[RMDB]
RNA sequence: GGGAACGACUCGAGUAGAGUCGAAAAAUCAACUUUAGAAUUUUAGAUCUAUCCCAGCCGAAUUUAGAAUUUUAGAUUUUCGACUUUCGGCUCGGGAGAGUUAAUAAAUGGCUGGGAGAGAAAGUAAAGCUAAUUACCUAUUCGUAGGUAAUUAGCUAAAAGAAACAACAACAACAAC
Reactivity to 2A3 in 0.01 (KOAc 150mM, MgCl2 10mM, bicine 150mM(pH8.5), 24C), signal-to-noise 1, nucleotides 027 to 126: a010u060c010a020a110c060u200u230u170a030g040a060a060u030u020u060u020a040g000a050u020c020u030a080u040c010c000c000a000g000c010c000g100a050a040u030u030u080a040g000a020a050u050u110u090u040a050g030a110u050u020u010u020c030g000a000c000u100u090u020c090g060g000c020u000c040g000g060g030a140g000a000g000u000u060a110a130u050a090a150a110u050g000g000c000u000g030g020g000a090g010a010g080a090a100a000g060u150a060a070
Reactivity to DMS in 0.01 (KOAc 150mM, MgCl2 10mM, bicine 150mM(pH8.5), 24C), signal-to-noise 2, nucleotides 027 to 126: a090u000c080a130a130c200u000u000u000a090g010a050a020u010u000u000u000a030g000a060u000c010u000a080u010c000c000c000a020g040c000c010g010a050a000u000u000u000a010g000a020a010u000u000u000u000a070g010a050u000u000u000u000c000g000a000c010u000u010u010c120g010g020c000u000c040g010g010g000a040g010a120g010u000u000a070a090u010a030a070a050u000g010g000c010u000g010g000g000a160g010a090g010a120a050a140g010u020a060a090